[RMDB]
RNA sequence: GGGAACGACUCGAGUAGAGUCGAAAAUUACGAGGUAUCAGCACUUUUCUUUCAUUGGGGGAAGGUGUGAGGAAAGUAACAAACAGCAGCGGAGUUUUAAACUUUAAAUAGACAGGUCUGAGUGCCUACCAUUAUAGUCGUUCGCGACUAUAAUGGUAAAAGAAACAACAACAACAAC
Reactivity to DMS in 0.01 (KOAc 150mM, MgCl2 10mM, bicine 150mM(pH8.5), 24C), signal-to-noise 1, nucleotides 027 to 126: u000u000a060c090g030a050g010g020u000a050u000c180a220g000c080a040c010u010u000u000u000c060u000u010u020c090a100u030u010g000g000g010g000g000a060a040g010g020u000g010u000g010a100g000g020a080a050a080g000u000a060a060c110a110a090a080c090a080g030c030a030g020c060g000g020a100g010u000u000u000u000a040a070a080c040u010u000u000a040a080a080u010a140g000a090c130a080g010g040u010c050u000g000a110g010u010g000c010c070u000
Reactivity to 2A3 in 0.01 (KOAc 150mM, MgCl2 10mM, bicine 150mM(pH8.5), 24C), signal-to-noise 1, nucleotides 027 to 126: u110u050a030c060g010a010g070g060u110a050u120c040a030g000c060a020c010u030u040u090u090c010u080u080u080c020a200u130u280g090g020g000g030g040a000a050g000g000u000g030u030g020a020g000g050a080a020a000g050u030a020a020c090a120a100a040c060a020g090c010a000g000c060g070g020a040g050u070u130u070u210a030a100a030c020u120u110u150a060a060a100u080a070g090a050c010a020g000g010u000c010u070g080a030g060u050g060c000c000u000